[RMDB]
RNA sequence: GGGAACGACUCGAGUAGAGUCGAAAAGGGAAUGGUGGUUUACCCCGUUAUCAAAUGAUUACCGACCAAUAAUUGGCGAAUCUCGUUUCGCGUUGGCUGCCUAAUUCAAGGAAUUAGCGUGCCUUCAAAGACAUCAAGAAGUUCGCUUCUUGAUGAACAUGGAUUAGUACUUCGGUACUAAUCCAUGAAAAGAAACAACAACAACAAC
Reactivity to 2A3 in 0.01 (KOAc 150mM, MgCl2 10mM, bicine 150mM(pH8.5), 24C), signal-to-noise 6, nucleotides 027 to 156: g050g010g010a080a100u140g020g020u050g010g070u060u080u210a140c000c000c010c010g050u080u080a100u130c080a030a020a150u160g020a040u090u070a070c030c060g080a120c030c060a040a060u250a140a080u140u120g050g000c010g020a030a060u030c080u040c190g080u010u030u010c020g000c000g010u000u030g010g010c040u090g000c010c010u010a010a010u020u010c080a180a120g150g020a060a020u000u010a010g020c050g050u020g000c010c000u000u020c030a070a070a020g080a020c000a010u010c000a010a000g000a000a000g020u070u180c190g050c070u000u000c000u010u010g000a000u000g000a010a010
Reactivity to DMS in 0.01 (KOAc 150mM, MgCl2 10mM, bicine 150mM(pH8.5), 24C), signal-to-noise 3, nucleotides 027 to 156: g010g000g010a080a060u000g010g010u010g000g000u000u010u000a100c020c000c000c000g020u000u000a090u000c100a080a070a100u000g020a160u010u000a030c000c010g000a080c010c010a120a160u010a060a120u000u000g000g010c000g000a050a060u010c040u000c100g000u000u000u010c060g020c090g010u010u010g010g020c030u020g030c140c020u010a010a040u000u000c040a170a170g030g000a030a020u000u000a040g010c070g020u010g000c000c010u000u000c040a090a080a120g020a190c010a030u000c000a010a010g000a010a020g010u010u000c300g020c010u000u000c000u010u000g010a010u010g010a030a140
Structure probing data (2A3 and DMS) for a 207-nucleotide construct.
For DMS, 8,895 sequencing reads were counted.
The data come from the RNA Mapping Database (RMDB), library M2RFPK.
For DMS the reverse transcriptase was MarathonRT.
Conditions: 150 mM KOAc, 10 mM MgCl2 and 150 mM bicine (pH 8.5), 24 C.